RNA sequence: GGGAACGACUCGAGUAGAGUCGAAAAGCAGACGCGCGGCAUGGAGGUGACGGAGUCCGCGUACGGCGACCACAUCCGGCAGUGCGUGUGCGCCUUCACGUCGGAGAUGGGGGUGUGACCCUCGCCCGUGAAGCGGAAUUUUCGAAUUCCGCUUCACAAAAGAAACAACAACAACAAC
Reactivity to 2A3 in 0.01 (KOAc 150mM, MgCl2 10mM, bicine 150mM(pH8.5), 24C), signal-to-noise 2, nucleotides 027 to 126: g020c010a020g000a080c010g040c010g000c030g020g000c040a090u130g030g000a060g000g030u030g040a060c100g130g040a010g050u080c020c040g080c030g060u120a090c030g100g010c020g040a050c030c000a020c000a030u020c020c000g020g000c040a020g010u000g000c040g000u120g100u020g040c000g060c000c000u040u070c030a080c060g190u170c090g070g000a100g030a130u110g040g020g010g000g010u150g150u170g090a080c000c000c000u000c020g000c000c010c000
Reactivity to DMS in 0.01 (KOAc 150mM, MgCl2 10mM, bicine 150mM(pH8.5), 24C), signal-to-noise 3, nucleotides 027 to 126: g010c010a020g000a010c000g010c020g010c000g010g030c010a060u010g020g000a020g010g050u000g020a150c160g000g000a300g010u010c000c060g020c250g000u030a070c160g020g000c010g000a180c040c010a020c010a040u000c010c000g000g030c020a040g010u000g010c030g000u000g030u000g000c010g000c040c020u000u000c030a050c080g000u020c150g040g010a100g020a150u020g020g010g000g010g000u010g000u000g020a120c000c000c020u000c010g020c020c020c060
This 177-nucleotide RNA was probed chemically with 2A3 and DMS. 2A3 adducts were read by reverse transcription with SuperScript II with manganese. Values cover nucleotides 27 to 126. The 2A3 profile rests on 2,214 reads. It was measured as part of the RMDB library OK2TST.